[RMDB]
RNA sequence: GGGAACGACUCGAGUAGAGUCGAAAAUCAUACGGGAACGUAUGACGUAUGCGAAAGCAUACGUAGGCGGGGGAAGCAGACAAACGCCCGUAUACACGCUUAAAAGUGUAUACGAUUAGCACAUGUGCGACUUAAAGCGCAUGAUGCAGGUCUGCGAUAUGUAUGUAUAUUUCGAUAUACAUACAUAAAAAGAAACAACAACAACAAC
Reactivity to DMS in 0.01 (KOAc 150mM, MgCl2 10mM, bicine 150mM(pH8.5), 24C), signal-to-noise 7, nucleotides 027 to 156: u000c000a010u000a010c000g020g010g030a110a160c010g030u000a010u000g010a030c000g020u000a000u000g010c020g010a220a130a300g010c000a000u000a000c000g010u000a020g020g010c040g020g000g010g000g010a120a200g000c000a000g000a030c020a060a100a100c040g010c050c030c000g020u000a000u000a010c000a010c000g000c160u000u010a090a110a080a130g020u000g010u000a000u000a010c000g000a090u000u000a100g010c000a050c020a030u000g010u000g000c000g010a170c170u000u010a120a090a290g000c000g010c000a010u000g010a080u010g020c000a130g010g000u000c010u000g000c000g010a150
Reactivity to 2A3 in 0.01 (KOAc 150mM, MgCl2 10mM, bicine 150mM(pH8.5), 24C), signal-to-noise 7, nucleotides 027 to 156: u030c000a000u010a010c000g010g020g080a120a040c010g010u010a000u010g010a000c000g000u000a000u000g000c000g040a100a020a010g000c000a000u000a000c000g010u030a030g010g010c040g000g020g000g010g020a030a070g000c000a000g000a000c010a010a140a010c040g000c000c010c000g000u000a000u000a000c010a000c000g030c060u130u200a050a050a040a070g000u000g000u000a000u000a000c000g000a010u020u120a010g000c000a000c000a000u000g000u010g010c020g040a070c070u170u280a150a050a020g000c010g000c000a000u000g030a030u010g000c010a000g030g040u000c000u000g000c000g000a000
This 207-nucleotide RNA was probed chemically with DMS and 2A3. Values cover nucleotides 27 to 156. It was measured as part of the RMDB library OK3TST. The RNA was probed in 150 mM KOAc, 10 mM MgCl2 and 150 mM bicine (pH 8.5) at 24 C.